[RMDB]
RNA sequence: GGGAACGACUCGAGUAGAGUCGAAAAGAUAUGGAUGCAUCGCAACAGCCUCCGUGUCGGAAACGACACGAGGACAUGCGAUGUCCUAAGUCAAAGCUCUUAUUCGGGUUCGCCCGAAUAAGAGCAACGAAGAGAUGCUCUUCGGAGCAUCUCUUCGAAAAGAAACAACAACAACAAC
Reactivity to DMS in 0.01 (KOAc 150mM, MgCl2 10mM, bicine 150mM(pH8.5), 24C), signal-to-noise 1, nucleotides 027 to 126: g000a070u000a300u010g000g010a070u000g010c000a040u000c000g030c000a000a070c130a200g000c050c060u030c050c130g040u000g000u010c000g000g000a080a070a130c010g000a020c010a000c000g000a010g010g000a010c010a090u000g030c010g010a010u000g010u000c000c000u010a050a180g010u010c040a080a120a130g010c010u000c010u000u000a020u000u010c010g000g000g000u000u030c230g010c010c000c010g000a000a000u010a000a020g000a010g020c000a000a020